[RMDB]
RNA sequence: GGGAACGACUCGAGUAGAGUCGAAAAGCCGAUGAAUUGCCGAGAAGCCUGGCUCGAAAUCGUCGACGCAUCGACGACGGUCCUGCCAUGAGACCGUAACGAGGACCUGUCGCCUCGAAUGGCGUCGUAUAACAUGAGUGGUUCGCCACUCAUGUAACGUAAAGAUUGACUUCGGUCAAUCUUUACGAAAAGAAACAACAACAACAAC
Reactivity to 2A3 in 0.01 (KOAc 150mM, MgCl2 10mM, bicine 150mM(pH8.5), 24C), signal-to-noise 5, nucleotides 027 to 156: g050c020c020g020a060u070g060a060a190u160u150g040c040c010g030a030g050a100a030g030c010c100u120g030g000c020u020c030g040a070a080a060u100c050g050u020c000g030a020c060g010c070a050u030c020g010a010c000g000a000c000g000g000u010c000c010u070g080c040c010a110u110g020a030g030a130c060c040g020u070a030a000c030g010a010g000g000a020c020c060u100g020u060c030g000c020c020u010c010g020a050a040u030g060g010c000g020u030c020g020u080a100u040a110a010c010a000u000g000a010g000u000g020g040u040u040c150g020c080c010a000c000u000c010a000u000g000u000a010a010
Reactivity to DMS in 0.01 (KOAc 150mM, MgCl2 10mM, bicine 150mM(pH8.5), 24C), signal-to-noise 2, nucleotides 027 to 156: g040c040c010g010a100u000g030a080a130u000u010g020c000c040g010a120g000a110a120g010c070c020u000g000g000c000u010c030g010a050a070a070u010c010g010u000c000g010a050c090g030c170a140u010c000g010a010c010g000a040c000g010g010u000c010c000u000g060c060c180a110u010g010a140g010a110c030c040g020u000a090a170c050g000a070g040g000a120c020c020u010g030u010c030g000c020c000u000c040g010a040a120u010g010g010c020g030u000c030g020u010a040u000a080a030c000a020u000g000a020g030u000g000g020u020u010c300g000c020c020a000c000u000c000a000u000g000u000a040a090
Structure probing data (2A3 and DMS) for a 207-nucleotide construct. 2A3 adducts were read by reverse transcription with SuperScript II with manganese. Conditions: 150 mM KOAc, 10 mM MgCl2 and 150 mM bicine (pH 8.5), 24 C. For DMS the reverse transcriptase was MarathonRT. The 2A3 profile rests on 4,134 reads.